[RMDB]
RNA sequence: GGGAACGACUCGAGUAGAGUCGAAAAGUGGGUAAGGGUAAAACCGAAAUCCCACUUUAUGACCGAAUUAAUCUAAACUCAGAGAGAUAAGGUAAUGACACAGAGGUUGUACUCACUUUGACGAUGACAUUCAUCCCCAGUUCGCUGGGGAUGAAUGAAAAGAAACAACAACAACAAC
Reactivity to DMS in 0.01 (KOAc 150mM, MgCl2 10mM, bicine 150mM(pH8.5), 24C), signal-to-noise 1, nucleotides 027 to 126: g020u000g010g000g000u010a130a300g010g010g030u000a070a040a160a130c020c000g010a050a250a220u040c000c000c000a020c000u000u000u000a070u020g020a100c000c020g000a270a050u010u000a050a170u020c010u000a080a080a140c100u000c040a030g000a100g000a130g000a090u020a070a140g000g010u000a050a050u000g000a100c090a040c090a050g010a090g040g000u000u000g000u010a030c060u000c070a070c110u000u000u000g020a140c090g000a090u000g010a140